[RMDB]
RNA sequence: GGGAACGACUCGAGUAGAGUCGAAAACUAAGCUACGGGAGGCGAAUGGUGAUCGCGGUCAGAUAAAUAGAGAAGGUUUCUUACAUGACAAAUCCUUGUCAUGGGAUCCGGAUGUUUUACAAACCAGCAUCCGUAGCCUUAUUGGCAACCUCCUCUCCUACUCAUUGGAGUUCGCUCCAAUGAGUAGAAAAGAAACAACAACAACAAC
Reactivity to 2A3 in 0.01 (KOAc 150mM, MgCl2 10mM, bicine 150mM(pH8.5), 24C), signal-to-noise 4, nucleotides 027 to 156: c020u060a060a000g030c040u070a020c070g010g020g010a030g030g030c040g030a060a060u080g030g020u040g040a070u050c040g010c060g030g030u060c020a020g000a110u110a100a210a060u190a040g020a010g000a020a010g020g000u000u020u000c010u030u050a050c010a000u000g010a000c000a010a080a080u130c090c110u020u030g000u000c010a000u000g000g000g000a000u000c040c000g000g000a010u010g030u030u030u030u090a100c100a040a100a030c090c060a010g000c000a000u010c000c000g010u000a020g010c000c000u210u290a270u140u260g010g000c000a000a000c000c000u000c000c000u010c020u040c000
Reactivity to DMS in 0.01 (KOAc 150mM, MgCl2 10mM, bicine 150mM(pH8.5), 24C), signal-to-noise 2, nucleotides 027 to 156: c040u000a050a160g020c010u000a050c070g030g020g020a090g050g030c040g010a060a030u010g020g000u010g010a030u000c040g000c060g000g000u020c040a080g010a150u010a010a050a140u000a040g000a040g020a030a020g010g020u000u000u000c010u000u010a150c000a020u010g000a020c010a030a040a160u020c140c160u000u010g050u030c020a010u010g010g010g010a020u000c180c030g000g010a010u000g000u000u000u000u020a300c090a130a070a160c150c020a110g000c000a010u000c010c000g010u000a030g000c020c020u010u020a110u010u000g000g010c020a040a020c020c000u000c010c000u000c020u000c110